RNA sequence: GGGAACGACUCGAGUAGAGUCGAAAAGAUAUGGAUUCGAUACAACUUUUGACGACAGUCGGAAACGACUGCUCGAUAAGUUGUCGAAUCCUAAGUCAAAAGCACGCAUAGUUCGCUAUGCGUGCAAGAAAUAUCAUCUCUUCGGAGAUGAUAUUUCAAAAGAAACAACAACAACAAC
Reactivity to DMS in 0.01 (KOAc 150mM, MgCl2 10mM, bicine 150mM(pH8.5), 24C), signal-to-noise 6, nucleotides 027 to 126: g000a040u000a300u010g000g010a000u000u000c000g000a100u010a070c110a000a010c010u000u000u010u000g010a230c170g000a100c010a010g020u000c000g010g000a080a060a150c000g010a010c000u000g010c110u010c000g010a060u000a020a020g010u000u000g010u000c000g010a020a010u000c000c000u000a020a070g010u010c020a080a070a120a170g010c000a000c010g010c000a010u000a000g010u000u010c250g010c000u000a000u000g000c000g000u000g000c000a000a010
Reactivity to 2A3 in 0.01 (KOAc 150mM, MgCl2 10mM, bicine 150mM(pH8.5), 24C), signal-to-noise 6, nucleotides 027 to 126: g010a010u030a020u070g000g000a010u000u010c010g020a040u090a270c060a040a020c070u160u200u290u270g130a030c030g000a010c010a000g000u000c000g030g020a040a030a010c000g000a000c000u000g010c010u000c000g020a020u050a230a060g000u000u000g010u000c000g000a000a000u000c000c010u000a030a010g010u000c020a020a040a100a080g000c010a000c000g000c000a000u000a010g030u060u100c250g040c170u000a000u000g000c000g000u000g000c000a000a000